[RMDB]
RNA sequence: GGGAACGACUCGAGUAGAGUCGAAAAUGUCUCAAUGGGACUCAUACCAAGAGAAAGGGAAGGAAGAAGUUUCCAGCUAGUUAGUUAAGCAAUUUCUCAACACAUUUAUGGAAGCAUGUGGAAUCUUUCAAGAAAGGGGUUACGAUCACAAAAGUUCUCUCUCAUCGGUAUUCGUACCGAUGAGAGAAAAAGAAACAACAACAACAAC
Reactivity to DMS in 0.01 (KOAc 150mM, MgCl2 10mM, bicine 150mM(pH8.5), 24C), signal-to-noise 1, nucleotides 027 to 156: u000g000u000c030u000c020a110a230u010g020g020g010a100c050u010c020a040u010a250c020c070a110a140g000a090g020a020a100a130g010g000g000a160a040g020g040a040a030g000a070a100g020u000u000u000c020c000a180g020c050u010a060g020u010u000a100g030u020u000a010a030g010c070a120a230u000u000u000c040u020c090a050a200c020a060c040a030u000u020u000a070u020g000g050a090a080g000c030a010u010g000u000g000g000a080a040u020c030u000u000u000c110a090a130g020a090a090a080g010g020g000g000u000u020a030c040g020a040u000c010a060c030a030a030a080a260g010u000u000c060
Reactivity to 2A3 in 0.01 (KOAc 150mM, MgCl2 10mM, bicine 150mM(pH8.5), 24C), signal-to-noise 2, nucleotides 027 to 156: u090g040u000c000u060c070a050a140u120g010g000g010a010c010u000c150a070u110a120c010c020a070a040g050a010g000a050a050a110g070g010g010a010a010g020g020a020a050g020a080a030g020u020u090u010c000c000a000g020c060u050a010g090u200u070a010g050u050u030a160a010g040c110a120a090u020u150u130c060u040c040a100a030c000a000c000a030u060u170u220a110u160g050g010a060a000g060c020a040u080g020u070g010g050a050a010u030c000u000u070u060c060a050a040g040a090a020a030g030g010g030g000u010u060a040c060g030a040u050c080a030c020a050a070a110a000g000u000u000c000

Chemical mapping of a 207-nucleotide RNA with DMS and 2A3. For DMS the reverse transcriptase was MarathonRT. For 2A3 the reverse transcriptase was SuperScript II with manganese. The RNA was probed in 150 mM KOAc, 10 mM MgCl2 and 150 mM bicine (pH 8.5) at 24 C. The 2A3 profile rests on 632 reads.